RNA sequence: GGGAACGACUCGAGUAGAGUCGAAAAGCCGAUGAAUUGCCGAGAAGCCUGGCUCGAAAUCGUCGACGCAUCGACGACGGUCCUGCCAUGAGACCGUAACGAGGAAAUGUCGCCUCGAAUGGCGUCGUAUAACAUGAGUGGUUCGCCACUCAUGUAAGUUUAGAAUCGGUUUCGACCGAUUCUAAACAAAAGAAACAACAACAACAAC
Reactivity to 2A3 in 0.01 (KOAc 150mM, MgCl2 10mM, bicine 150mM(pH8.5), 24C), signal-to-noise 4, nucleotides 027 to 156: g070c020c010g030a040u090g070a060a180u200u130g040c030c020g030a050g050a130a020g020c030c080u110g030g000c020u050c080g110a130a130a080u020c010g010u000c010g000a040c100g030c150a090u060c020g010a000c010g000a010c000g000g000u000c010c020u060g060c010c010a060u040g020a030g000a070c000c000g010u070a000a020c020g000a000g010g050a000a080a140u170g090u140c070g010c020c000u020c000g000a020a020u060g000g030c000g010u050c020g020u040a100u040a240a000c000a000u000g000a000g000u000g010g040u030u060c090g040c060c000a000c000u000c000a000u000g000u010a000a000
Reactivity to DMS in 0.01 (KOAc 150mM, MgCl2 10mM, bicine 150mM(pH8.5), 24C), signal-to-noise 1, nucleotides 027 to 156: g030c020c020g000a040u000g030a030a120u000u000g000c050c040g010a120g000a100a140g010c120c060u000g010g000c000u000c010g000a070a080a100u000c000g010u000c010g030a080c100g050c100a170u000c010g020a060c000g000a020c000g030g030u020c000c010u010g070c060c240a090u000g030a110g010a030c010c010g000u020a000a080c040g000a080g070g030a010a050a140u000g020u020c070g020c000c000u000c000g020a020a100u000g010g010c020g000u000c040g040u000a130u000a070a050c010a010u020g040a020g020u000g000g010u000u030c300g010c020c010a010c020u000c000a000u000g010u000a010a090

Overview: This 207-nucleotide RNA was probed chemically with 2A3 and DMS. Conditions: 150 mM KOAc, 10 mM MgCl2 and 150 mM bicine (pH 8.5), 24 C. Source: RMDB library M2RFPK, as collected in RNAgym. The 2A3 profile rests on 3,022 reads.